Chemical mapping of a 177-nucleotide RNA with 2A3 and DMS. 2A3 adducts were read by reverse transcription with SuperScript II with manganese. For DMS, 1,746 sequencing reads were counted. The data come from the RNA Mapping Database (RMDB), library 15KREP.
RNA sequence: GGGAACGACUCGAGUAGAGUCGAAAAAGUAAAGGAACAAGUCUCAGACUUGCUUGUUAAAUUACUGCGUGGAAUGCCGAUUCCAGAUUUUGAUUUAGACGAUUUUAUUGACGCACCAUGCUAUUGCGUAUGCUGAUAGGUUCGCCUAUCAGCAUACAAAAGAAACAACAACAACAAC
Reactivity to 2A3 in 0.01 (KOAc 150mM, MgCl2 10mM, bicine 150mM(pH8.5), 24C), signal-to-noise 2, nucleotides 027 to 126: a000g050u060a010a000a070g130g040a020a010c010a010a000g060u020c040u030c140a060g060a160c040u050u030g000c030u030u000g010u050u070a080a110a010u030u020a020c040u040g010c030g010u020g000g030a160a130u050g020c050c000g030a040u020u030c010c000a040g010a030u050u050u020u110g060a080u030u060u160a090g030a130c040g000a010u030u000u000u130a080u070u130g010a030c000g030c000a000c000c000a000u030g000c000u040a100u070u110g000c020
Reactivity to DMS in 0.01 (KOAc 150mM, MgCl2 10mM, bicine 150mM(pH8.5), 24C), signal-to-noise 2, nucleotides 027 to 126: a040g010u000a010a030a040g020g000a050a040c000a000a010g010u010c100u010c170a160g020a080c150u000u010g010c040u020u010g000u010u010a030a100a040u000u000a010c030u010g030c060g000u010g000g010a050a040u000g020c030c100g010a180u000u000c040c040a080g010a050u000u010u010u000g010a080u010u000u000a110g030a100c130g010a080u000u000u000u000a070u010u000g020a110c210g000c090a070c050c020a050u020g010c020u000a130u010u000g010c280

The 2A3 profile rests on 1,076 reads.